[RMDB]
RNA sequence: GGGAACGACUCGAGUAGAGUCGAAAAUGUGCUUCCUUCGGGAAGCACAAAAAAGCGUACUACAGCGCACGCACCUACCCACCUCGUUCCCAAAUAGGAACGAGAGGGUGAACUACGUGGCUGUAUCGCAAAAAACCCCAUGUUUCGACAUGGGGAACCUACAUGUAAUGUUCGCAUUACAUGUAGGAAAAGAAACAACAACAACAAC
Reactivity to DMS in 0.01 (KOAc 150mM, MgCl2 10mM, bicine 150mM(pH8.5), 24C), signal-to-noise 2, nucleotides 027 to 156: u000g010u000g000c010u000u000c000c000u000u010c300g030g010g000a020a020g000c030a010c000a000a020a070a060a080a140g000c000g030u000a030c020u000a020c010a000g010c010g060c030a010c010g000c010a100c140c090u000a080c020c020c020a300c040c080u010c000g000u000u000c000c000c000a080a200a170u000a030g000g010a020a000c000g020a090g000a300g020g010g010u000g000a030a170c040u000a050c020g000u000g020g010c000u000g010u000a010u010c030g020c020a010a020a090a060a040a080c000c000c010c010a030u000g010u000u000u010c230g010a110c000a030u000g000g000g040g000a040a000
Reactivity to 2A3 in 0.01 (KOAc 150mM, MgCl2 10mM, bicine 150mM(pH8.5), 24C), signal-to-noise 4, nucleotides 027 to 156: u090g000u000g000c000u000u010c000c000u000u070c190g060g010g000a010a010g010c010a010c010a000a000a000a000a000a000g020c020g020u060a040c050u010a000c010a000g000c150g030c150a000c010g030c010a040c010c010u090a110c010c030c020a100c040c000u020c000g000u000u030c000c000c030a090a120a100u120a040g000g000a000a020c000g000a000g010a020g020g010g010u010g000a040a080c130u210a030c240g000u000g010g010c000u000g000u010a000u100c020g000c000a000a010a000a120a060a050c000c000c010c000a000u000g030u020u100u120c210g080a030c000a000u000g000g000g010g000a000a000